[RMDB]
RNA sequence: GGGAACGACUCGAGUAGAGUCGAAAAGCUAGUAGCCUACAAAUUUACCAAAGCUGGGUACACUGUCUAUUACCCUAUGCUGACUCAGAGUAAAGAGGACUUGGUUGUAUGUAAGGAUGGUAAAUUUAGUAAGGUUCAGGUUAAAACAGCCACAACGGCUGUGUUACACGUUCGCGUGUAACACAGCAAAAGAAACAACAACAACAAC
Reactivity to DMS in 0.01 (KOAc 150mM, MgCl2 10mM, bicine 150mM(pH8.5), 24C), signal-to-noise 1, nucleotides 027 to 156: g010c040u000a120g000u010a140g050c010c000u010a170c030a020a060a110u030u000u000a000c030c020a000a120a300g000c190u000g000g050g020u000a020c030a060c040u000g000u020c020u000a230u000u010a030c030c000c010u000a080u000g020c050u000g030a150c070u010c140a120g030a080g020u000a040a060a080g030a210g000g000a050c010u000u000g030g040u000u010g000u000a030u000g030u030a140a070g000g010a300u000g000g020u000a010a010a080u000u020u010a110g010u030a090a070g030g000u000u000c070a130g000g020u010u010a010a080a070a050c040a110g010c030c000a000c030a060a120c120g060
Reactivity to 2A3 in 0.01 (KOAc 150mM, MgCl2 10mM, bicine 150mM(pH8.5), 24C), signal-to-noise 2, nucleotides 027 to 156: g070c030u050a020g110u140a000g080c000c000u020a020c000a020a020a030u000u000u010a010c000c000a030a090a030g130c010u040g090g000g110u000a010c030a010c020u060g050u030c030u020a090u020u100a020c020c040c000u020a080u240g080c100u130g090a130c060u060c130a010g020a020g050u060a020a080a010g040a030g000g030a030c030u060u090g070g050u190u160g000u010a040u050g130u050a050a010g040g030a050u040g010g000u000a010a000a010u010u000u020a040g010u020a130a130g000g000u020u040c030a020g000g040u020u010a000a190a030a030c030a010g020c000c010a040c030a060a090c070g060
Annotation
An RNA of 207 nucleotides, treated with DMS and 2A3 and read out base by base. It was measured as part of the RMDB library OK3TST. The 2A3 profile rests on 1,317 reads. The RNA was probed in 150 mM KOAc, 10 mM MgCl2 and 150 mM bicine (pH 8.5) at 24 C. The DMS profile rests on 1,968 reads. High 2A3 reactivity points to a flexible backbone, as in loops and unpaired stretches. DMS adducts were read by reverse transcription with MarathonRT.